[RMDB]
RNA sequence: GGGAACGACUCGAGUAGAGUCGAAAAUAAACUCGAUGCAACAGUUCCUGGAUAUCCUAAGCUUUUCAUUACUCGUGAAGAGGCUGUAAGGCAAGUUCGAAGCUGGAUAGGCUUCGAUGUUGAGGGUGUAUAUAUACCUCUUCGGAGGUAUAUAUACAAAAGAAACAACAACAACAAC
Reactivity to 2A3 in 0.01 (KOAc 150mM, MgCl2 10mM, bicine 150mM(pH8.5), 24C), signal-to-noise 4, nucleotides 027 to 126: u060a000a070a000c020u010c010g030a030u130g060c100a180a030c010a120g010u000u010c000c000u000g030g070a100u060a070u180c030c030u050a050a020g010c000u020u040u040u000c000a020u010u170a170c040u030c080g040u040g150a110a050g020a030g070g000c010u040g050u100a030a020g010g020c020a060a030g040u010u010c000g000a010a010g010c000u040g040g110a250u140a140g020g000c010u000u000c010g000a000u020g060u050u060g030a050g000g040g020u040
Reactivity to DMS in 0.01 (KOAc 150mM, MgCl2 10mM, bicine 150mM(pH8.5), 24C), signal-to-noise 4, nucleotides 027 to 126: u010a070a080a050c030u000c010g010a050u010g020c100a080a070c120a170g020u000u000c010c010u000g010g010a110u010a050u000c010c010u010a090a110g000c000u000u000u000u000c010a030u010u010a170c130u000c090g010u000g000a080a080g000a030g010g010c130u010g010u010a060a060g000g020c130a100a100g010u010u010c010g020a020a010g020c000u010g000g020a160u020a110g000g000c000u000u000c000g010a020u010g020u000u010g010a110g000g020g010u000
Structure probing data (2A3 and DMS) for a 177-nucleotide construct. 2A3 adducts were read by reverse transcription with SuperScript II with manganese. DMS adducts were read by reverse transcription with MarathonRT.